[RMDB]
RNA sequence: GGGAACGACUCGAGUAGAGUCGAAAAGGGGUCGGAUCGUGGUUAGAGACAUGCUGGAUACUGAAGCCUCCACGGUAUCUCAGCAACAGCUCUAACGUAACAUCGAUCCGACGGAGGCACCCAAACUCUGCUCCCUGACUUCGGUCAGGGAGCAGAGGUGUAGUACUCACUUCGGUGAGUACUACACAAAAGAAACAACAACAACAAC
Reactivity to DMS in 0.01 (KOAc 150mM, MgCl2 10mM, bicine 150mM(pH8.5), 24C), signal-to-noise 1, nucleotides 027 to 156: g030g000g030g040u000c010g020g010a020u010c010g050u010g060g010u000u020a030g030a060g000a140c030a190u010g040c000u020g010g040a000u000a030c000u000g000a040a160g040c050c010u000c000c010a300c050g010g030u000a000u000c000u030c020a030g010c040a110a140c120a160g000c000u000c000u000a030a020c030g050u000a080a120c110a030u000c000g000a040u010c000c000g000a000c020g030g000a000g060g030c010a150c020c000c000a060a100a300c040u000c030u010g030c020u000c000c000c000u010g060a030c050u000u040c300g060g000u010c010a010g050g000g030a000g010c000a000g000a000g000
Reactivity to 2A3 in 0.01 (KOAc 150mM, MgCl2 10mM, bicine 150mM(pH8.5), 24C), signal-to-noise 2, nucleotides 027 to 156: g160g010g030g000u000c010g000g000a000u010c000g000u000g010g000u010u000a010g010a000g030a160c070a200u030g000c000u000g000g000a000u000a000c000u010g020a090a020g000c010c010u000c010c000a010c000g000g010u010a010u010c250u040c080a010g000c010a030a070c100a080g070c000u000c010u010a000a010c000g010u060a010a020c020a160u090c010g000a000u000c000c000g000a000c000g000g000a010g000g000c010a030c000c000c000a030a050a070c000u000c000u000g000c010u000c000c000c000u000g010a010c000u030u060c300g090g000u000c000a000g000g000g000a000g000c000a000g000a000g000